[RMDB]
RNA sequence: GGGAACGACUCGAGUAGAGUCGAAAAUGGGCACCAACUAGAGGUUCCUGUGGUACUCACCGAAGGCCGCGAACGUAGGAAAGAAAAAGAUAGAAAAGCUGGGUAAGACUCACCUGGCGACUCGUCGCCUCCUGUGUAUCUUCGGAUACACAGGAGGAAAAGAAACAACAACAACAAC
Reactivity to DMS in 0.01 (KOAc 150mM, MgCl2 10mM, bicine 150mM(pH8.5), 24C), signal-to-noise 3, nucleotides 027 to 126: u010g010g000g040c020a030c030c030a080a140c150u000a100g000a160g000g000u000u010c030c010u000g040u010g000g020u000a050c060u020c040a060c060c020g010a090a100g000g020c040c030g000c050g000a050a050c080g020u010a050g000g000a070a060a100g020a060a070a050a080a070g000a090u010a080g000a040a060a170a300g000c020u000g000g000g000u000a060a120g000a110c110u000c090a050c020c000u000g010g010c010g000a070c170u000c030g000u000c030g020
Reactivity to 2A3 in 0.01 (KOAc 150mM, MgCl2 10mM, bicine 150mM(pH8.5), 24C), signal-to-noise 2, nucleotides 027 to 126: u080g000g000g000c040a000c040c030a070a090c070u110a080g030a080g300g000u020u050c000c020u020g000u010g080g000u040a160c010u010c050a060c040c050g030a110a030g010g010c020c020g010c040g030a100a020c060g050u040a050g080g020a110a080a040g010a040a100a020a020a000g070a020u230a020g060a080a050a010a010g010c020u020g030g030g020u100a160a100g080a180c030u040c150a020c000c000u010g010g010c010g020a020c010u000c000g020u030c020g000